An RNA of 177 nucleotides, treated with DMS and 2A3 and read out base by base.
Reactivities are given for positions 27 through 126.
Conditions: 150 mM KOAc, 10 mM MgCl2 and 150 mM bicine (pH 8.5), 24 C.
For DMS the reverse transcriptase was MarathonRT.
[RMDB]
RNA sequence: GGGAACGACUCGAGUAGAGUCGAAAAGUAGUUUAUAAUCAUCAGGAAGCUGCGAAGUAUGAGAACCAUACGGAAAAUGCUUUGUUAUUGUAUAUGGCCUGUACACAUGCCAGUAAUCCUGUGUAUGGCAUUUAGUCUCAUUCGUGAGACUAAAUGCAAAAGAAACAACAACAACAAC
Reactivity to DMS in 0.01 (KOAc 150mM, MgCl2 10mM, bicine 150mM(pH8.5), 24C), signal-to-noise 3, nucleotides 027 to 126: g020u000a070g030u010u000u000a060u000a110a080u010c080a090u010c060a080g020g010a060a120g000c020u010g020c100g000a250a100g010u010a010u010g000a100g000a120a300c040c010a010u000a010c040g010g010a070a090a090a070u000g010c050u010u010u000g010u000u000a040u000u000g010u000a080u010a050u000g000g010c070c050u010g000u000a020c040a090c080a040u020g000c060c040a050g020u010a130a100u000c100c010u000g000u000g000u010a050u000g010
Reactivity to 2A3 in 0.01 (KOAc 150mM, MgCl2 10mM, bicine 150mM(pH8.5), 24C), signal-to-noise 1, nucleotides 027 to 126: g040u050a020g010u090u040u040a040u030a060a080u080c050a010u000c020a030g130g000a020a020g050c030u070g000c020g000a090a020g000u020a000u030g040a060g010a170a020c030c000a010u020a030c010g030g100a090a100a000a020u070g020c020u110u060u060g090u100u100a070u050u170g030u030a110u000a000u180g030g060c010c030u010g010u020a000c030a000c000a020u050g020c010c000a010g020u070a010a040u050c030c000u020g000u020g030u030a030u050g110